Chemical mapping of a 207-nucleotide RNA with 2A3. The RNA was probed in 150 mM KOAc, 10 mM MgCl2 and 150 mM bicine (pH 8.5) at 24 C. For 2A3 the reverse transcriptase was SuperScript II with manganese. Source: RMDB library M2RFPK, as collected in RNAgym.
[RMDB]
RNA sequence: GGGAACGACUCGAGUAGAGUCGAAAACUCAAUGUAGGGAAUAACAUUGAAUUGAUACAAAUACCUUUUUCGGUGUAGGGAAAAACACCGAAUUUAUACAAAUACCUUUCUCAAUGUAGGGAAUAACAAAACAGGCAUCGCUUCGGCGAUGCCUGAAGACACAGCAUAAGUUCGCUUAUGCUGUGUCAAAAGAAACAACAACAACAAC
Reactivity to 2A3 in 0.01 (KOAc 150mM, MgCl2 10mM, bicine 150mM(pH8.5), 24C), signal-to-noise 1, nucleotides 027 to 156: c020u020c040a000a020u060g040u060a060g000g220g080a130a150u100a220a000c010a000u030u000g060a070a020u080u060g050a070u130a270c060a000a190a040u090a060c000c020u000u000u030u000u000c000g000g010u000g000u010a010g000g000g090a180a000a300a020a000c000a010c000c010g000a000a000u000u020u010a000u020a000c020a000a060a000u100a020c000c000u000u060u030c060u050c010a110a090u190g040u120a060g000g020g060a080a140u120a110a050c140a100a050a000a000c010a010g000g010c010a000u000c000g000c000u000u110c150g070g000c000g020a000u000g000c060c000u000g000a000a000